[RMDB]
RNA sequence: GGGAACGACUCGAGUAGAGUCGAAAAGCCGUAAACGCAUCCGGCGAAUAAGAUGCAUGAGCGAAAGCUCUAAGAUAAUUGGCCGUUUAGUAGGGGCCGUAGAACCUACUUAUUAAUGCUCGAGACGUGUGGAGCGAUCAUCACGCAAGACUAACAAAAUCGAUCGGUAUUUCGAUACCGAUCGAUUAAAAGAAACAACAACAACAAC
Reactivity to DMS in 0.01 (KOAc 150mM, MgCl2 10mM, bicine 150mM(pH8.5), 24C), signal-to-noise 1, nucleotides 027 to 156: g040c000c080g010u000a060a230a210c010g070c010a040u000c030c010g000g020c020g000a110a090u000a040a180g020a060u000g020c030a170u000g000a030g000c010g000a260a190a270g000c040u010c010u000a090a040g000a030u000a100a120u000u010g000g000c020c000g000u000u010u000a060g030u000a010g000g000g010g030c010c100g060u010a020g000a030a140c010c000u010a010c000u000u000a160u000u000a110a140u000g010c040u000c000g000a140g000a110c100g020u000g020u010g010g030a210g000c030g010a160u000c020a170u000c040a070c030g000c060a020a090g030a300c020u000a090a020c060a000a040
Reactivity to 2A3 in 0.01 (KOAc 150mM, MgCl2 10mM, bicine 150mM(pH8.5), 24C), signal-to-noise 2, nucleotides 027 to 156: g040c020c000g000u010a130a070a050c130g000c020a010u030c000c000g010g050c030g040a070a140u130a100a040g000a000u000g030c010a030u040g030a000g000c010g030a030a050a030g000c000u000c020u000a090a030g080a100u200a130a090u100u080g020g000c000c000g020u040u050u030a000g020u000a000g020g010g000g000c040c020g000u060a060g020a020a000c000c000u000a010c000u010u000a000u010u090a080a030u100g000c040u020c070g020a040g010a060c000g010u030g030u120g040g020a070g010c020g010a030u050c000a050u100c010a000c020g000c010a070a050g040a080c060u080a090a040c060a080a120
An RNA of 207 nucleotides, treated with DMS and 2A3 and read out base by base. Values cover nucleotides 27 to 156. For 2A3, 932 sequencing reads were counted. Source: RMDB library OK3TST, as collected in RNAgym. Conditions: 150 mM KOAc, 10 mM MgCl2 and 150 mM bicine (pH 8.5), 24 C.